[RMDB]
RNA sequence: GGGAACGACUCGAGUAGAGUCGAAAAGAAAGAAAGAAAGGAGGGGCGGGAGGGGGGUCCCCGGUGCUCGGAUCUCGAGGGUGCUUAUUGUUCGGUCCGAGCCUGGGUCUCCCUCUUCCCCCCAUAACUACUGGCUUAGGUUCGCCUAAGCCAGUAGAAAAGAAACAACAACAACAAC
Reactivity to 2A3 in 0.01 (KOAc 150mM, MgCl2 10mM, bicine 150mM(pH8.5), 24C), signal-to-noise 2, nucleotides 027 to 126: g070a000a030a000g100a010a120a020g130a120a100a010g020g110a030g000g010g020g000c080g010g000g000a010g000g000g010g000g000g050u030c020c000c030c080g000g070u190g000c000u010c000g000g040a010u030c180u030c130g020a030g050g140g050u170g130c100u200u190a090u290u260g100u150u020c000g040g000u000c000c000g000a000g000c000c000u000g000g000g000u000c000u010c000c040c000u030c000u030u000c000c020c000c000c000c000a010u020a030a000
Chemical mapping of a 177-nucleotide RNA with 2A3.
Source: RMDB library RFM100, as collected in RNAgym.
Reactivities are rounded to 0.1 and cut off at 0 and 3.
The RNA was probed in 150 mM KOAc, 10 mM MgCl2 and 150 mM bicine (pH 8.5) at 24 C.